The record gives the reactivity of an RNA of 207 nucleotides to DMS and 2A3.
The DMS profile rests on 4,153 reads.
It was measured as part of the RMDB library M2RFPK.
DMS adducts were read by reverse transcription with MarathonRT.

RNA sequence: GGGAACGACUCGAGUAGAGUCGAAAAGUUAGGUGAGGCGGCUACACGAACAUAGGCCACUGACCCCGUACGUCGAGAGACGCCCCGGGUCAGGACAGCUCUUCCCGGCUUAAGGGUUGAGCCCAGGUAUCACCCUGGCUAUUCGUAGCCAGGGUAAGAUAAGUAAAGGUUUCGACCUUUACUUAUCAAAAGAAACAACAACAACAAC
Reactivity to DMS in 0.01 (KOAc 150mM, MgCl2 10mM, bicine 150mM(pH8.5), 24C), signal-to-noise 2, nucleotides 027 to 156: g000u000u000a020g050g020u010g010a090g000g010c050g020g010c020u000a080c070a160c040g000a060a060c070a170u010a090g010g000c000c000a150c020u010g000a020c030c000c000c070g020u000a040c020g000u000c000g010a300g010a300g000a020c010g010c010c060c060c180g000g030g000u000c000a020g010g000a060c070a040g000c010u000c010u010u010c010c020c020g000g000c140u010u000a090a120g020g000g000u000u010g000a100g000c030c000c030a130g020g000u000a100u000c060a100c000c010c000u000g020g030c020u000a030u000u010c250g030u000a030g010c000c000a010g000g010g000u010a000a040
Reactivity to 2A3 in 0.01 (KOAc 150mM, MgCl2 10mM, bicine 150mM(pH8.5), 24C), signal-to-noise 2, nucleotides 027 to 156: g080u090u070a040g010g050u040g030a030g030g060c050g000g000c040u070a020c060a020c170g130a140a010c050a120u150a080g080g000c030c010a060c000u000g000a010c010c000c020c010g010u020a020c020g010u000c000g010a020g000a000g000a170c000g040c020c030c010c010g030g000g000u010c000a000g010g030a020c020a010g010c010u000c000u020u020c010c020c020g010g000c060u120u140a050a100g010g010g010u000u020g010a010g000c000c000c020a040g080g000u120a080u270c080a010c000c000c000u000g000g000c000u010a030u070u080c200g090u040a000g000c000c000a000g030g000g000u000a000a000